[RMDB]
RNA sequence: GGGAACGACUCGAGUAGAGUCGAAAACAUUUUAACGCGUGUGCACUCUCUAACACGAAUUACCCAGUUAUUUUCGACUUUACUCCAGUCGUUAUAGCGUGCGUUGAGAGAGUUGGCCGCGAUUGAAGACACGAUAAGAGUUCGCUCUUAUCGUGUCAAAAGAAACAACAACAACAAC
Reactivity to DMS in 0.01 (KOAc 150mM, MgCl2 10mM, bicine 150mM(pH8.5), 24C), signal-to-noise 2, nucleotides 027 to 126: c260a110u000u000u000u000a040a040c220g010c010g000u020g010u000g020c120a050c020u000c030u000c020u000a080a050c040a030c020g000a080a060u020u000a120c060c080c070a140g000u000u000a080u000u010u000u000c000g000a020c000u000u000u000a000c020u000c010c100a020g000u000c000g040u000u000a020u000a070g000c020g020u000g000c030g020u000u000g010a040g010a050g000a040g020u000u010g000g030c000c000g020c020g010a140u020u000g000a120a130
Reactivity to 2A3 in 0.01 (KOAc 150mM, MgCl2 10mM, bicine 150mM(pH8.5), 24C), signal-to-noise 1, nucleotides 027 to 126: c020a130u100u140u100u190a100a030c090g030c010g060u040g020u010g110c010a040c070u000c000u000c000u020a050a000c010a000c020g030a050a040u090u050a080c060c030c030a050g020u040u110a130u060u050u000u000c010g010a000c000u000u020u010a000c020u000c020c000a010g000u000c000g010u000u030a020u010a020g000c050g010u080g020c000g110u110u200g020a040g000a000g010a000g020u050u170g080g010c030c000g000c010g030a030u000u190g060a150a040